[RMDB]
RNA sequence: GGGAACGACUCGAGUAGAGUCGAAAAGAUAUGGAGAGGCUUAGAAGGGAGAAAUUAACAGGACUCGUUAUCGGAAACGAUAAUGUUGCUGUUUAUUUCGACGAUCUUCUAAGCCUCUCCUAAGUCACAAAGUGGUUACGUUCGCGUAACCACUUUGAAAAGAAACAACAACAACAAC
Reactivity to DMS in 0.01 (KOAc 150mM, MgCl2 10mM, bicine 150mM(pH8.5), 24C), signal-to-noise 2, nucleotides 027 to 126: g000a040u000a300u000g020g020a020g020a010g010g000c010u000u000a020g010a010a020g000g000g000a040g010a020a010a000u010u000a020a010c000a000g010g000a080c220u000c030g010u000u010a000u000c010g000g010a090a110a290c010g000a010u000a000a010u020g010u000u000g020c000u000g020u000u000u000a040u000u010u000c000g010a050c290g000a010u000c000u000u000c010u000a000a010g000c010c000u000c000u000c000c000u000a000a030g010u000c070a200
Annotation:
Source: RMDB library TTRINS, as collected in RNAgym. This 177-nucleotide RNA was probed chemically with DMS. Values cover nucleotides 27 to 126. The DMS profile rests on 2,184 reads. The reactions ran in a buffer of 150 mM KOAc, 10 mM MgCl2 and 150 mM bicine (pH 8.5), at 24 C.